Structure probing data (2A3 and DMS) for a 207-nucleotide construct. For 2A3, 1,989 sequencing reads were counted. It was measured as part of the RMDB library OK3TST.
RNA sequence: GGGAACGACUCGAGUAGAGUCGAAAAUCUGCUUGCGUACUCUAGCCAGUGUGGACUCCGGUGCCGUACGCGUCCUCGAGGUCUACGGUAUGGCCGAGCAACAGUACGAGCUCGUACUCUUCCCCUCUCCCGAAUAUGUGAGCUCGCUGGCAUCGCGCAAUUGCUGGGUAUUCGUACCCAGCAAUUGAAAAGAAACAACAACAACAAC
Reactivity to 2A3 in 0.01 (KOAc 150mM, MgCl2 10mM, bicine 150mM(pH8.5), 24C), signal-to-noise 3, nucleotides 027 to 156: u050c070u070g010c030u080u070g010c020g020u040a050c040u030c030u090a010g020c020c010a060g000u040g020u080g150g070a100c030u010c070c080g050g010u090g050c050c000g050u070a050c140g000c000g080u020c020c050u070c070g040a140g070g000u040c010u040a030c020g030g050u120a080u120g070g000c040c050g020a020g020c030a040a040c000a020g050u080a040c030g010a000g040c040u050c100g100u120a140c080u090c120u200u120c020c000c020c000u020c000u000c020c010c010g020a050a070u220a070u150g060u050g020a040g000c000u000c010g000c000u000g000g000c020a080u040c030g000c010g000
Reactivity to DMS in 0.01 (KOAc 150mM, MgCl2 10mM, bicine 150mM(pH8.5), 24C), signal-to-noise 2, nucleotides 027 to 156: u010c070u000g020c040u000u000g000c000g020u010a080c060u010c050u000a120g040c040c020a080g040u010g020u010g030g010a110c020u010c000c030g050g020u010g010c030c040g040u010a030c120g020c060g000u010c020c000u000c050g000a090g010g000u000c010u000a060c040g020g040u000a110u000g020g030c050c020g030a060g000c020a060a120c060a090g000u010a070c010g010a060g000c020u010c030g050u010a050c050u010c060u010u000c010c000c020c050u000c090u000c020c040c050g000a070a130u000a060u000g020u010g010a070g030c010u010c020g010c020u000g020g010c040a120u000c070g020c110g020